[RMDB]
RNA sequence: GGGAACGACUCGAGUAGAGUCGAAAAAGAAAGCAAGGCGAAGGGAAGCCACCACCGCGGGAGCUGUACGUUGUACGAGAGCUCAGCUUUUACCUUCCCAAACCGGGGAAAGGGAAAACCCAAAAAAGUACCUAAUUAGGUUCGCCUAAUUAGGUACAAAAGAAACAACAACAACAAC
Reactivity to 2A3 in 0.01 (KOAc 150mM, MgCl2 10mM, bicine 150mM(pH8.5), 24C), signal-to-noise 2, nucleotides 027 to 126: a000g020a020a000a000g020c060a020a080g070g010c020g090a070a070g040g000g040a070a020g050c000c010a020c010c010a050c030c020g080c020g050g050g000a020g000c020u030g030u050a030c070g180u120u300g070u190a030c000g010a020g010a000g250c000u000c030a000g000c000u000u010u000u040a030c000c020u020u030c020c000c000a020a090a080c120c030g010g000g000g000a050a010a080g030g020g000a040a080a030a070c000c000c050a040a040a000a000a010a020
Reactivity to DMS in 0.01 (KOAc 150mM, MgCl2 10mM, bicine 150mM(pH8.5), 24C), signal-to-noise 3, nucleotides 027 to 126: a090g020a070a060a040g020c040a160a120g000g000c040g010a140a120g010g000g010a190a100g010c050c070a070c040c030a030c070c030g000c040g000g020g010a010g020c030u000g020u000a060c050g010u000u000g020u000a060c040g010a110g000a030g020c010u010c030a140g010c020u000u000u000u000a090c050c050u000u000c000c000c000a040a060a090c200c100g000g000g000g010a030a020a020g000g010g010a040a000a050a150c010c020c040a010a050a060a100a070a110